This 177-nucleotide RNA was probed chemically with DMS and 2A3. For 2A3, 1,805 sequencing reads were counted. Conditions: 150 mM KOAc, 10 mM MgCl2 and 150 mM bicine (pH 8.5), 24 C. DMS adducts were read by reverse transcription with MarathonRT.
RNA sequence: GGGAACGACUCGAGUAGAGUCGAAAACAGUGAUGGAAACAUCACUGAAAAACGUGGUAGCGCCCCACGAAAAAGUCGAUCGAAUACCGAUCGACAAGCGCUAAAGUCAUGCCGAAAGGCAUGACAAAUGCAUUACUCGCUUCGGCGAGUAAUGCAUAAAAGAAACAACAACAACAAC
Reactivity to DMS in 0.01 (KOAc 150mM, MgCl2 10mM, bicine 150mM(pH8.5), 24C), signal-to-noise 1, nucleotides 027 to 126: c020a000g000u000g000a000u050g000g000a230a120a150c000a000u000c010a080c000u060g000a000a080a020a210a300c000g000u020g020g000u000a000g000c000g060c000c300c020c000a000c010g000a070a050a010a080a020g020u000c010g000a000u000c020g000a060a180u020a260c120c000g000a000u000c040g030a000c000a020a000g010c000g000c000u000a010a110a140g040u000c000a010u000g000c020c000g000a160a170a000g000g000c010a000u000g000a000c020a000a060
Reactivity to 2A3 in 0.01 (KOAc 150mM, MgCl2 10mM, bicine 150mM(pH8.5), 24C), signal-to-noise 2, nucleotides 027 to 126: c000a000g000u000g000a000u010g010g000a010a060a000c000a000u000c000a000c000u000g020a030a010a000a000a010c010g000u000g000g000u010a050g010c000g000c090c000c120c000a000c080g290a060a010a010a000a000g000u000c000g000a010u010c000g000a010a080u210a300c110c010g010a010u000c000g000a000c000a010a000g000c000g010c000u030a150a000a000g000u030c000a000u000g000c000c010g080a100a010a000g010g000c000a000u000g020a000c000a050a010